Background: This 177-nucleotide RNA was probed chemically with 2A3 and DMS. It was measured as part of the RMDB library OK1LIB. The 2A3 profile rests on 6,011 reads.
RNA sequence: GGGAACGACUCGAGUAGAGUCGAAAAUACGCUGCCGGCAACGACCACUUGCUCAACGACGUGCUGAAAGGUGCUUGGGGAUACCGCGGUUGGGUGAUGUCGGAUUGGGGCGGAACACCCAGCUGGGCUCCUCAUACAUCUUCGGAUGUAUGAGGAGAAAAGAAACAACAACAACAAC
Reactivity to 2A3 in 0.01 (KOAc 150mM, MgCl2 10mM, bicine 150mM(pH8.5), 24C), signal-to-noise 6, nucleotides 027 to 126: u190a020c040g000c040u060g060c010c010g060g000c040a070a020c050g050a030c010c030a040c080u060u110g000c010u020c040a040a030c060g110a020c030g060u100g040c010u090g100a150a080a070g040g020u070g030c040u060u080g020g000g010g050a060u080a140c020c030g070c020g160g000u010u010g030g010g020u020g030a080u180g040u040c030g020g010a030u040u140g050g010g020g000c020g010g010a020a010c020a030c000c000c000a010g010c020u080g000g040g030
Reactivity to DMS in 0.01 (KOAc 150mM, MgCl2 10mM, bicine 150mM(pH8.5), 24C), signal-to-noise 3, nucleotides 027 to 126: u040a050c080g000c020u000g000c030c010g000g000c070a080a100c070g000a110c040c020a060c090u030u020g010c040u000c080a070a090c070g000a090c080g000u010g000c000u000g000a070a070a100g000g020u020g010c070u000u020g000g000g000g020a120u010a060c080c000g000c010g010g000u000u000g000g000g010u010g010a040u030g000u020c020g000g000a140u030u000g020g010g010g000c010g020g000a080a110c040a040c000c000c000a070g010c000u020g010g020g000